[RMDB]
RNA sequence: GGGAACGACUCGAGUAGAGUCGAAAACAGCCUCCUGAGUAGCUGAGACUACAGACGCAUGCCACCACGCCUAGCUAAUUUUUUUUUUUUUGUAGAGCUGGGAUCUCACUAUGUUGCCCAAGGUGGUUACUACAUAUCAGUUCGCUGAUAUGUAGUAAAAAGAAACAACAACAACAAC
Reactivity to 2A3 in 0.01 (KOAc 150mM, MgCl2 10mM, bicine 150mM(pH8.5), 24C), signal-to-noise 3, nucleotides 027 to 126: c030a030g070c010c030u040c010c030u080g050a040g030u010a010g000c040u060g090a010g020a090c030u050a020c060a070g060a030c020g010c030a010u080g000c000c000a020c000c010a010c020g020c000c010u010a010g030c000u030a050a050u020u040u020u010u000u000u010u000u010u010u080u160u070g070u090a070g020a020g060c020u010g040g000g000a030u040c030u020c050a020c010u090a080u210g120u090u110g100c010c000c010a020a010g050g000u040g020g000u010
Reactivity to DMS in 0.01 (KOAc 150mM, MgCl2 10mM, bicine 150mM(pH8.5), 24C), signal-to-noise 5, nucleotides 027 to 126: c110a110g010c040c020u000c020c030u000g010a090g020u000a030g010c080u000g010a080g010a100c040u000a040c060a070g010a120c070g000c070a070u000g000c010c000a020c010c010a150c090g000c010c010u000a030g000c020u000a010a010u000u000u000u000u000u000u000u000u000u000u050u000u000g000u000a130g000a050g010c010u000g000g000g000a070u000c040u000c030a060c060u010a050u010g010u000u000g010c030c010c030a070a080g000g010u000g000g020u000
Chemical mapping of a 177-nucleotide RNA with 2A3 and DMS. The reactions ran in a buffer of 150 mM KOAc, 10 mM MgCl2 and 150 mM bicine (pH 8.5), at 24 C. For DMS, 10,041 sequencing reads were counted. Reactivities are given for positions 27 through 126.